[RMDB]
RNA sequence: GGGAACGACUCGAGUAGAGUCGAAAACACGGUUUUUUCGCGGGCCUGUUCCUCGGCCAUGCCCUCGCUUUCCACGAAGUCGCUGAAGGCUUUCAGCAGGGGUGCGCGUCUCGCCCGGCGAUCGACCCGAAUACAAGGUCUUCGGACCUUGUAUUCGAAAAGAAACAACAACAACAAC
Reactivity to DMS in 0.01 (KOAc 150mM, MgCl2 10mM, bicine 150mM(pH8.5), 24C), signal-to-noise 2, nucleotides 027 to 126: c100a130c140g000g000u000u000u000u000u000u010c020g040c030g000g010g030c010c110u010g000u010u000c020c020u010c100g020g000c030c030a050u000g010c020c010c020u000c070g000c020u000u010u020c070c100a170c210g000a060a050g000u000c050g030c150u000g010a060a100g000g010c080u000u000u000c070a040g010c020a070g000g010g010g010u000g000c080g020c110g020u010c030u010c170g000c010c010c000g020g030c000g010a030u000c110g010a080c040c040
Reactivity to 2A3 in 0.01 (KOAc 150mM, MgCl2 10mM, bicine 150mM(pH8.5), 24C), signal-to-noise 2, nucleotides 027 to 126: c040a010c000g000g050u040u020u040u030u110u090c040g000c000g020g010g000c020c020u050g010u020u020c010c000u000c010g020g030c010c000a000u140g120c000c010c000u060c040g020c000u080u170u030c100c020a080c120g020a040a030g020u060c050g060c260u270g100a150a050g090g010c000u020u100u080c070a010g020c020a000g000g010g110g000u040g060c100g000c020g100u010c010u000c050g000c000c000c000g180g020c000g040a020u040c020g030a030c000c000